[RMDB]
RNA sequence: GGGAACGACUCGAGUAGAGUCGAAAACAGCGGCUACAACAUGAACCCUGUCUUCAUAUACAUGGUGCCGAAGCCCUGCCCCCGCGCGCGUAUCGUGCUCCCAGGUUUGUGCGCUCGGCCGGUACGCGGUGCGUAAUACUUUCGAGUAUUACGCACCAAAAGAAACAACAACAACAAC
Reactivity to DMS in 0.01 (KOAc 150mM, MgCl2 10mM, bicine 150mM(pH8.5), 24C), signal-to-noise 5, nucleotides 027 to 126: c050a070g020c120g040g010c010u000a090c110a110a090c130a110u000g000a100a070c030c030c030u000g010u000c100u000u000c170a090u000a110u000a080c040a030u000g010g010u000g000c100c090g000a100a100g010c010c010c010u000g010c010c020c000c020c040g010c180g000c100g010c000g010u000a010u000c020g000u000g010c010u000c020c030c020a140g000g010u010u000u010g010u010g010c040g000c070u010c110g010g010c020c010g000g020u000a010c020g010c030
Reactivity to 2A3 in 0.01 (KOAc 150mM, MgCl2 10mM, bicine 150mM(pH8.5), 24C), signal-to-noise 3, nucleotides 027 to 126: c010a000g030c080g040g000c040u110a020c070a200a000c030a160u130g070a060a060c020c010c050u000g050u030c040u170u120c070a060u130a010u020a190c030a040u050g010g020u040g070c050c030g040a030a020g030c010c000c000u030g020c030c000c010c020c000g020c010g000c000g000c000g020u030a010u010c030g040u110g050c000u040c020c030c000a000g050g030u100u180u130g110u070g020c010g000c040u020c020g010g000c000c010g000g000u010a000c010g000c010
Annotation:
The record gives the reactivity of an RNA of 177 nucleotides to DMS and 2A3. It was measured as part of the RMDB library OK2TRN. Reactivities are given for positions 27 through 126. 2A3 adducts were read by reverse transcription with SuperScript II with manganese. For DMS, 7,112 sequencing reads were counted. For DMS the reverse transcriptase was MarathonRT.